[RMDB]
RNA sequence: GGGAACGACUCGAGUAGAGUCGAAAAGAAGUGGAGAGAUGCUCCGGGGCGCAUGUGUUCUCCAGGGGCAGCUCCCAACCCCUCUGCACCGUGAAGCUGCGCCACGGACAGAUUUACCACCUGGAGUUUGUCUACAAGUUCCUGGCCUUUAAGCUGAGAUUGAGUUCAAAUUCGUUUGAACUCAAUCAAAAGAAACAACAACAACAAC
Reactivity to 2A3 in 0.01 (KOAc 150mM, MgCl2 10mM, bicine 150mM(pH8.5), 24C), signal-to-noise 1, nucleotides 027 to 156: g080a130a000g030u030g040g000a070g000a000g000a060u000g000c040u000c000c000g000g000g000g000c040g020c120a200u300g050u130g070u180u030c000u030c000c030a050g000g000g000g000c000a040g030c020u000c000c010c010a030a150c000c020c000c050u040c060u100g060c070a100c060c000g060u040g070a080a000g050c040u050g020c010g050c040c010a000c000g000g000a000c000a000g030a020u020u060u110a120c040c030a000c010c050u050g000g000a040g020u040u090u000g040u070c040u090a110c000a040a020g010u020u020c010c010u010g060g000c000c000u210u190u070a070a040g030c010u020g060a030
An RNA of 207 nucleotides, treated with 2A3 and read out base by base. Values cover nucleotides 27 to 156.